RNA sequence: GGGAACGACUCGAGUAGAGUCGAAAAGAUAUGGAUAUAGUUCGGGGUGUAUUCAUCGUUGAAAACAUAGGUUCUCGGAAACGAGAACCUAUGUUGGAGAUGAUACACAAGGAUAUAUCCUAAGUCACAAUAUAUGCCUGUUCGCAGGCAUAUAUUGAAAAGAAACAACAACAACAAC
Reactivity to DMS in 0.01 (KOAc 150mM, MgCl2 10mM, bicine 150mM(pH8.5), 24C), signal-to-noise 3, nucleotides 027 to 126: g010a050u010a300u000g010g010a010u000a010u000a010g010u020u000c020g010g010g020g040u000g010u000a000u010u010c010a000u000c010g010u000u010g000a250a130a010a010c000a010u000a010g000g000u000u000c000u000c000g000g000a110a090a200c000g020a010g000a010a000c010c000u000a000u000g010u000u000g000g000a060g010a010u000g000a030u000a000c000a010c000a100a120g010g000a030u000a010u000a020u000c000c000u010a070a110g000u000c030a270
Reactivity to 2A3 in 0.01 (KOAc 150mM, MgCl2 10mM, bicine 150mM(pH8.5), 24C), signal-to-noise 2, nucleotides 027 to 126: g040a000u080a080u230g000g000a010u020a020u010a070g300u090u060c100g010g000g300g000u040g000u030a100u130u300c010a010u000c020g220u300u090g030a070a060a000a010c000a000u000a010g000g020u010u000c010u000c020g010g010a110a150a100c000g000a000g000a000a000c000c000u000a000u020g000u000u000g010g000a000g000a000u000g000a000u000a000c010a000c010a000a020g020g000a010u000a000u000a010u020c000c010u010a140a020g110u050c010a000
Source: RMDB library TTRINS, as collected in RNAgym. Structure probing data (DMS and 2A3) for a 177-nucleotide construct. For 2A3, 6,076 sequencing reads were counted. The RNA was probed in 150 mM KOAc, 10 mM MgCl2 and 150 mM bicine (pH 8.5) at 24 C. Reactivities are rounded to 0.1 and cut off at 0 and 3. The DMS profile rests on 5,703 reads.